[RMDB]
RNA sequence: GGGAACGACUCGAGUAGAGUCGAAAAGAUAUGGAAUCGACCCUGAGCGAUAAGACCGGUGUCGGAAACGACACGGGUCUUUUGACGCUCAGCGAUUCCUAAGUCAAAACCUGGCUUCGGCCAGGAAGUAGAGUGGUAUGUUCGCAUACCACUCUACAAAAGAAACAACAACAACAAC
Reactivity to DMS in 0.01 (KOAc 150mM, MgCl2 10mM, bicine 150mM(pH8.5), 24C), signal-to-noise 3, nucleotides 027 to 126: g010a030u000a300u010g040g010a020a010u000c000g020a240c300c270c050u010g000a000g030c010g000a160u000a020a010g000a010c020c000g000g040u000g000u000c000g000g010a070a060a140c000g000a010c000a000c000g030g020g010u000c000u000u000u010u000g010a230c130g000c000u000c000a000g000c000g000a010u000u000c000c000u000a010a090g000u010c040a120a070a110a210c010c000u000g010g000c010u000u010c250g040g000c000c000a000g000g000a010a040
Reactivity to 2A3 in 0.01 (KOAc 150mM, MgCl2 10mM, bicine 150mM(pH8.5), 24C), signal-to-noise 2, nucleotides 027 to 126: g030a030u110a050u130g010g000a010a010u010c010g120a270c140c020c090u030g010a000g000c040g070a100u050a300a010g010a000c060c070g300g000u010g020u000c010g020g000a020a050a000c010g000a000c010a000c000g020g020g000u000c000u010u010u000u020g050a010c030g000c000u020c010a000g000c000g000a010u000u000c000c000u020a120a000g020u040c000a040a010a150a230c000c000u000g000g020c000u110u070c300g190g000c010c000a000g000g020a020a020